Chemical mapping of a 177-nucleotide RNA with 2A3.
The RNA was probed in 150 mM KOAc, 10 mM MgCl2 and 150 mM bicine (pH 8.5) at 24 C.
For 2A3 the reverse transcriptase was SuperScript II with manganese.
The 2A3 profile rests on 530 reads.
Reactivities are rounded to 0.1 and cut off at 0 and 3.

RNA sequence: GGGAACGACUCGAGUAGAGUCGAAAAAGACGACCAAUAUGACGAAGCAGUGGACCAACGAUACGAAUGCGACCUUGAAUUUCUUGCCAUUCACUUUCAAUUUUCUCCUUUGCAACUGGAGGACUCCUCUCGUCCGUACCUUCGGGUACGGACGAGAAAAAGAAACAACAACAACAAC
Reactivity to 2A3 in 0.01 (KOAc 150mM, MgCl2 10mM, bicine 150mM(pH8.5), 24C), signal-to-noise 2, nucleotides 027 to 126: a000g100a000c100g040a140c010c000a020a000u100a040u150g080a070c040g070a000a050g000c030a040g070u040g060g150a070c000c040a020a010c040g020a030u040a100c010g090a070a000u010g020c010g040a030c000c000u100u020g000a080a140u130u040u070c000u060u090g000c000c000a010u010u050c060a070c080u030u000u140c140a060a050u050u070u130u000c080u030c000c000u070u090u090g110c060a100a050c050u080g000g000a040g010g090a100c010u060c000c000